[RMDB]
RNA sequence: GGGAACGACUCGAGUAGAGUCGAAAAGCAGAGUCCUCGUCCCGGAGGGCCGGCGGUUAUGGCCGGGCUGCCCGGAGGGGCUGUCCGCCAUAUUAGCCGGGGGGAACGGCCCAGGCCCGGAAGGGAGCAGGCUAACCCCGGACGACCGGCGCUUCCGCCGAAAUUCUAUCUUCGGAUAGAAUUUCGGAAAAGAAACAACAACAACAAC
Reactivity to 2A3 in 0.01 (KOAc 150mM, MgCl2 10mM, bicine 150mM(pH8.5), 24C), signal-to-noise 1, nucleotides 027 to 156: g060c070a030g070a030g200u130c000c020u030c020g100u060c050c020c010g000g000a000g030g010g000c000c000g000g020c030g000g040u010u010a000u020g030g070c240c030g100g020g010c010u010g000c010c000c020g060g090a110g040g020g000g020c030u020g000u000c000c000g000c000c000a020u000a000u010u000a020g010c010c000g000g000g000g000g010g010a180a060c090g030g010c020c000c000a020g090g020c000c020c000g070g060a060a030g000g000g030a000g010c020a000g020g000c000u030a100a090c000c000c030c000g010g000a000c030g060a140c000c000g090g000c080g070c120u030u050c050c030g020
Chemical mapping of a 207-nucleotide RNA with 2A3.